[RMDB]
RNA sequence: GGGAACGACUCGAGUAGAGUCGAAAACGUCAAAGGGAAGCGCGGUGAGUUCCGGUCCACCAACGCAGCAUUCAUCGAGUUCGGCCUGCCCUCUUCGAAGCACAUCCGCUUCCGCGUGCAGCUGAAGCGGACAAAGACGAUUCGUCGUCUUUGUCCGAAAAGAAACAACAACAACAAC
Reactivity to DMS in 0.01 (KOAc 150mM, MgCl2 10mM, bicine 150mM(pH8.5), 24C), signal-to-noise 9, nucleotides 027 to 126: c090g000u010c080a070a100a130g010g000g010a060a070g010c040g020c110g010g010u000g010a120g000u000u000c050c040g020g000u000c040c040a070c080c050a070a110c090g000c060a070g010c070a070u000u000c060a080u000c040g000a080g010u010u010c060g010g010c020c030u000g010c030c020c020u000c040u000u000c050g010a150a150g010c040a060c070a070u000c080c040g000c020u000u000c010c040g010c070g010u000g010c070a070g010c070u010g000a040a050g010
Reactivity to 2A3 in 0.01 (KOAc 150mM, MgCl2 10mM, bicine 150mM(pH8.5), 24C), signal-to-noise 8, nucleotides 027 to 126: c030g050u030c040a070a060a070g060g020g020a060a030g020c030g010c040g050g010u050g030a100g030u060u050c050c010g020g020u030c030c020a040c030c020a060a040c050g020c060a050g020c020a060u070u090c020a020u090c040g020a030g070u110u070c020g020g020c020c010u050g010c010c000c000u040c020u060u040c030g030a050a010g010c020a010c000a100u040c030c040g010c020u030u020c010c010g020c010g020u070g020c040a030g000c010u050g020a030a010g030